[RMDB]
RNA sequence: GGGAACGACUCGAGUAGAGUCGAAAAGAACUGUGCCAAUGCUUUUGACCACAGCGGAUAAUCUUUCAUGGUGGAACUCAACUCAAUUUUGAAGACGCCACUCACGUUAUCCAUCACCAUCAUGAGACCCACGAGUAAAUUUCGAUUUACUCGUGGGAAAAGAAACAACAACAACAAC
Reactivity to DMS in 0.01 (KOAc 150mM, MgCl2 10mM, bicine 150mM(pH8.5), 24C), signal-to-noise 1, nucleotides 027 to 126: g010a080a110c010u000g010u010g020c270c030a040a040u000g000c090u010u020u000u010g030a150c210c020a040c090a010g020c000g000g000a100u000a030a060u000c090u000u010u010c100a070u000g000g010u000g020g000a070a080c080u010c020a040a050c230u000c040a080a070u000u000u000u000g000a020a080g000a150c190g000c010c060a030c040u000c130a070c230g000u010u000a090u000c020c040a070u010c100a110c000c010a090u000c050a050u000g000a050g010a160
Reactivity to 2A3 in 0.01 (KOAc 150mM, MgCl2 10mM, bicine 150mM(pH8.5), 24C), signal-to-noise 1, nucleotides 027 to 126: g000a100a040c020u020g000u030g010c000c030a030a010u100g050c080u080u140u070u090g020a000c000c000a000c010a020g020c030g010g020a020u060a060a110u120c050u030u220u120c050a070u100g000g000u010g010g030a070a060c010u020c040a010a040c020u020c090a180a240u110u130u010u140g040a060a060g020a020c000g030c050c000a020c030u000c010a050c010g010u010u020a010u000c020c020a000u010c020a080c040c000a030u080c010a020u080g050a020g090a090

Source: RMDB library OK2TST, as collected in RNAgym. The record gives the reactivity of an RNA of 177 nucleotides to DMS and 2A3. For DMS, 704 sequencing reads were counted. Values cover nucleotides 27 to 126.